[RMDB]
RNA sequence: GGGAACGACUCGAGUAGAGUCGAAAAGAAAGAAGGCGUAAUCGCCGUGUACGAGCUCCACGAUCAAUGAUUUUCUCGCCUUACGGCAUUGAUCGGACGUACCUCGGAUUGCCGCCUUACAAAGUUAAUACUAGAUUAAAUAAACCGUUGGGGCAAACUACUCCGUAUGGUUCGCCAUACGGAGUAGAAAAGAAACAACAACAACAAC
Reactivity to 2A3 in 0.01 (KOAc 150mM, MgCl2 10mM, bicine 150mM(pH8.5), 24C), signal-to-noise 2, nucleotides 027 to 156: g100a030a140a040g070a000a000g010g000c010g000u060a010a040u120c080g030c100c030g000u010g000u000a010c000g000a070g130c120u140c150c080a120c040g000a000u010c000a010a010u010g100a160u060u070u230u160c160u060c090g060c010c000u100u070a050c070g000g000c010a000u010u000g000a000u000c000g000g010a010c000g000u000a000c000c010u050c020g010g000a000u000u060g040c100c040g000c000c060u010u000a060c040a000a100a000g060u070u130a110a060u060a250c100u040a010g050a200u200u090a060a130a180u130a060a100a070c030c030g010u020u100g020g000g010g010c010a060a030a070